RNA sequence: GGGAACGACUCGAGUAGAGUCGAAAAUUUAUGGGCACCGACCUCAACUAUAUGAUUAUGGAGAAUGUACUGGUGACUAAAAGACCGCGCAGUGAGGAGUGGUAGUUAAUUUCCAGACUAUUUUGCAAAACCAUAGAUCAUUCGUGAUCUAUGGUUUAAAAGAAACAACAACAACAAC
Reactivity to DMS in 0.01 (KOAc 150mM, MgCl2 10mM, bicine 150mM(pH8.5), 24C), signal-to-noise 9, nucleotides 027 to 126: u000u010u000a080u010g010g010g010c030a050c030c020g000a100c040c030u000c050a090a150c070u000a060u000a060u010g010a130u010u000a080u000g010g000a130g000a090a080u000g010u000a080c070u010g020g010u000g000a050c050u010a050a050a080a110g000a090c040c030g010c080g020c060a080g000u010g010a060g000g010a120g020u010g000g010u000a030g000u000u000a050a090u010u000u000c020c010a140g000a080c110u010a090u000u000u000u010g010c140a060
Reactivity to 2A3 in 0.01 (KOAc 150mM, MgCl2 10mM, bicine 150mM(pH8.5), 24C), signal-to-noise 2, nucleotides 027 to 126: u030u030u020a100u050g040g000g030c020a000c040c010g040a050c000c020u020c020a030a120c050u090a020u040a050u300g250a120u160u110a050u160g020g010a020g050a070a040u090g020u090a080c040u080g040g010u020g030a000c040u030a000a010a080a040g070a020c020c020g000c010g000c030a050g060u050g050a020g020g020a030g010u060g010g010u000a010g000u010u040a090a060u030u080u010c000c020a020g030a030c030u040a100u120u130u070u080g000c030a000